Structure probing data (DMS) for a 177-nucleotide construct. It was measured as part of the RMDB library M2PK90.
RNA sequence: GGGAACGACUCGAGUAGAGUCGAAAACAUUUUAACGCGUGUGCACUCUCUAACACCAAUUACCCAGUUAUUUUCGACUUUACUCGAGUCGUUAUAGCGUGCGUUGAGAGAGUUGGCCGCGAUUGAAUCGCUCUAUUACUUUCGAGUAAUAGAGCGAAAAAGAAACAACAACAACAAC
Reactivity to DMS in 0.01 (KOAc 150mM, MgCl2 10mM, bicine 150mM(pH8.5), 24C), signal-to-noise 2, nucleotides 027 to 126: c230a110u010u010u000u010a040a060c030g050c070g010u000g030u000g000c060a110c020u000c020u020c020u020a060a030c030a040c030c050a090a080u000u000a110c020c020c020a140g000u000u010a070u000u000u000u010c000g000a020c010u000u000u000a010c000u000c020g000a010g010u000c010g000u000u000a020u000a060g010c030g010u000g020c050g020u000u000g000a030g020a090g000a040g000u000u010g010g000c000c010g010c010g000a110u000u010g010a080a100